[RMDB]
RNA sequence: GGGAACGACUCGAGUAGAGUCGAAAACGGUGGUAGUGAUCGAUGCGCUUCCGUUGACGGUCAACGGCAAACUUGAUCAUCGUGCGUUGCCGGCACCGGAAUACGGUGAUACCAACGGAUAUCGCGCCACUACGCAGCCAUUCGUGGCUGCGUAGUGAAAAGAAACAACAACAACAAC
Reactivity to DMS in 0.01 (KOAc 150mM, MgCl2 10mM, bicine 150mM(pH8.5), 24C), signal-to-noise 2, nucleotides 027 to 126: c030g000g000u000g000g010u050a120g020u020g000a090u010c040g020a040u010g000c020g050c080u000u010c000c000g000u000u020g010a160c060g000g010u000c020a000a000c010g010g020c010a060a100a120c110u000u020g020a140u080c140a100u000c130g010u060g050c000g050u000u000g000c000c000g000g010c050a000c000c020g000g020a270a130u020a070c010g030g000u010g000a120u000a070c300c010a000a020c000g000g000a060u040a020u000c100g030c000g010c050
Reactivity to 2A3 in 0.01 (KOAc 150mM, MgCl2 10mM, bicine 150mM(pH8.5), 24C), signal-to-noise 5, nucleotides 027 to 126: c060g030g060u100g050g060u090a080g030u060g080a140u080c100g040a020u130g020c020g000c020u030u000c000c010g010u000u030g030a040c020g000g070u250c030a040a010c000g060g040c040a050a080a150c080u090u150g060a150u290c070a080u130c080g050u060g110c020g020u000u000g000c000c000g020g000c000a010c000c020g040g030a060a090u280a050c020g000g000u010g000a020u160a170c050c020a000a030c000g050g000a030u040a040u180c050g000c010g020c000
Chemical mapping of a 177-nucleotide RNA with DMS and 2A3. The reactions ran in a buffer of 150 mM KOAc, 10 mM MgCl2 and 150 mM bicine (pH 8.5), at 24 C. Reactivities are given for positions 27 through 126. Source: RMDB library OK1LIB, as collected in RNAgym.